[RMDB]
RNA sequence: GGGAACGACUCGAGUAGAGUCGAAAAGAUAUGGAAAUCCUGUGGACAUGCCUUGUCGGAAACGAUGGGCAACAGCCACAGGGAUUUCCUAAGUCAAAAGUUAUAAUUUGUUCGCAAAUUAUAACAAGCAAGAUUAAUACUUCGGUAUUAAUCUUGCAAAAGAAACAACAACAACAAC
Reactivity to 2A3 in 0.01 (KOAc 150mM, MgCl2 10mM, bicine 150mM(pH8.5), 24C), signal-to-noise 1, nucleotides 027 to 126: g020a020u060a040u130g000g010a000a000a030u020c010c000u000g020u000g000g000a060c000a150u070g000c050c000u130u300g000u010c000g030g000a020a040a010c000g010a010u000g000g020g000c000a030a010c060a040g050c000c000a000c000a020g030g000g000a010u000u000u000c000c000u000a020a000g040u000c070a060a000a070a170g000u000u010a010u000a010a030u030u020u000g060u070u070c240g000c140a000a020a000u000u010a010u010a020a010c010a000a010
Reactivity to DMS in 0.01 (KOAc 150mM, MgCl2 10mM, bicine 150mM(pH8.5), 24C), signal-to-noise 2, nucleotides 027 to 126: g000a040u010a300u000g000g000a030a000a000u000c000c000u010g000u000g000g000a090c140a220u000g010c000c000u020u000g050u000c000g000g020a130a110a150c000g000a000u000g010g010g020c020a040a040c260a120g010c000c000a000c000a000g000g020g020a000u000u000u000c000c000u010a030a100g000u000c040a070a100a130a140g000u000u000a010u000a000a010u000u000u020g000u010u010c210g010c030a010a000a010u000u000a000u010a000a000c010a040a130